[RMDB]
RNA sequence: GGGAACGACUCGAGUAGAGUCGAAAAGGCUAUUAGUCAAACGCGGACGCAGAAUAUAAAUGGCUGUGAACGCACGUUCGGGACGGGAGAUAGUAUGCGCUUUCGAUCUAGGUGUGCGUAACUCAGCGUGUGCGUGUUUCAUAGUCGACUCCGAACGAAAGCAACAGGAAUUCGUUCCUGUUGCUUUAAAAGAAACAACAACAACAAC
Reactivity to DMS in 0.01 (KOAc 150mM, MgCl2 10mM, bicine 150mM(pH8.5), 24C), signal-to-noise 3, nucleotides 027 to 156: g000g000c010u000a050u000u010a110g020u000c080a020a060a090c020g030c040g040g020a130c010g020c070a170g010a140a120u000a190u000a090a070a090u000g030g010c010u000g000u000g010a300a120c020g000c010a020c030g000u010u010c060g000g010g010a140c000g010g010g010a080g020a050u000a110g060u010a140u000g020c090g000c030u000u000u000c020g010a080u000c020u010a080g010g000u000g010u000g010c020g030u000a030a100c060u000c040a070g010c010g040u010g090u000g000c000g010u000g010u020u020u010c020a070u010a060g010u010c000g000a030c050u000c010c030g030a060a090c100g010
Reactivity to 2A3 in 0.01 (KOAc 150mM, MgCl2 10mM, bicine 150mM(pH8.5), 24C), signal-to-noise 5, nucleotides 027 to 156: g000g000c000u010a010u120u160a060g060u170c040a020a060a000c000g000c010g030g020a000c020g010c080a030g090a300a020u140a030u140a200a270a080u170g090g000c020u000g020u020g040a060a010c010g000c000a010c010g020u140u180c040g050g030g020a020c020g000g070g000a010g000a050u120a050g200u170a130u230g160c170g030c030u050u030u030c020g240a300u000c010u030a060g090g030u030g010u020g010c030g020u030a070a050c030u010c030a000g010c030g010u000g000u020g090c000g000u020g020u010u010u000c010a000u010a010g000u010c010g050a080c040u000c020c020g070a110a060c030g050
Record summary:
An RNA of 207 nucleotides, treated with DMS and 2A3 and read out base by base. The data come from the RNA Mapping Database (RMDB), library OK3TST. For 2A3, 2,178 sequencing reads were counted.